[RMDB]
RNA sequence: GGGAACGACUCGAGUAGAGUCGAAAAUUGGAAGUAAGGCCUGUAACUGUAGGUCAAGGACGUCUAUCUGAAGGGUUAGCAGCCUCCCCAUUAAGCUUGAAAACAUUUUGACACCUUGGUUAUGGAGACUAUGGACUGUGUUCGCACAGUCCAUAGUAAAAGAAACAACAACAACAAC
Reactivity to 2A3 in 0.01 (KOAc 150mM, MgCl2 10mM, bicine 150mM(pH8.5), 24C), signal-to-noise 2, nucleotides 027 to 126: u040u040g040g030a000a040g060u110a100a080g070g000c020c010u070g030u070a130a080c040u080g030u140a000g070g000u020c020a000a000g100g040a030c060g050u000c050u070a070u000c020u030g090a110a030g000g010g010u010u030a000g030c020a010g050c030c010u040c020c000c000c000a020u060u080a030a000g050c060u000u030g040a050a060a000a000c060a060u070u060u060u140g060a040c000a060c050c020u020u020g080g000u070u000a050u110g040g000a040g020
Reactivity to DMS in 0.01 (KOAc 150mM, MgCl2 10mM, bicine 150mM(pH8.5), 24C), signal-to-noise 4, nucleotides 027 to 126: u000u000g010g020a100a050g020u010a090a120g000g020c020c020u000g010u010a080a120c100u000g010u000a030g030g020u000c040a060a070g020g010a080c080g000u010c050u000a050u000c060u010g000a100a050g000g000g010u010u010a070g040c070a120g000c000c020u000c020c010c010c030a090u000u010a090a090g020c040u000u010g000a070a060a060a060c100a110u000u010u000u000g000a060c110a070c060c020u000u000g010g020u000u000a040u010g000g010a140g000
This 177-nucleotide RNA was probed chemically with 2A3 and DMS. Values cover nucleotides 27 to 126.